Source: RMDB library OK2TST, as collected in RNAgym. This 177-nucleotide RNA was probed chemically with DMS and 2A3. DMS (dimethyl sulfate) methylates the pairing face of unpaired adenines and cytosines. The reactions ran in a buffer of 150 mM KOAc, 10 mM MgCl2 and 150 mM bicine (pH 8.5), at 24 C. DMS adducts were read by reverse transcription with MarathonRT. For 2A3 the reverse transcriptase was SuperScript II with manganese.

[RMDB]
RNA sequence: GGGAACGACUCGAGUAGAGUCGAAAAUAGGGGCAGAGCUAUCUGCGUCAGUAAAACAACAUGUGGGUGCCGGUCAGUUUGUAAUUAAAAGACUUUUAAACUCACCACUUUUUCUGCUAAUAAAACCACCCAAUGUUAAUUUCGAUUAACAUUGGGUAAAAGAAACAACAACAACAAC
Reactivity to DMS in 0.01 (KOAc 150mM, MgCl2 10mM, bicine 150mM(pH8.5), 24C), signal-to-noise 4, nucleotides 027 to 126: u000a060g000g000g020g010c010a010g000a100g010c220u010a070u000c010u000g010c030g010u000c050a090g020u020a040a070a050a070c090a070a060c130a090u010g020u000g010g000g030u000g010c300c180g010g020u000c040a070g000u000u000u000g010u000a070a080u010u010a040a050a100a110g010a040c020u000u020u010u000a040a190a080c030u000c030a020c030c150a090c080u010u010u000u000u000c010u000g010c070u000a060a080u000a070a060a070a140c060c060
Reactivity to 2A3 in 0.01 (KOAc 150mM, MgCl2 10mM, bicine 150mM(pH8.5), 24C), signal-to-noise 2, nucleotides 027 to 126: u170a010g030g010g040g010c040a000g000a020g040c120u130a080u140c010u010g030c050g160u010c000a010g040u040a020a050a080a080c050a070a010c030a080u140g000u040g020g040g010u020g030c070c020g080g000u030c000a030g010u050u100u130g070u080a070a100u080u130a020a170a000a000g010a020c000u060u050u060u170a080a100a010c010u020c020a030c000c030a020c030u060u090u000u040u020c020u030g010c070u030a040a090u090a150a210a040a020c020c080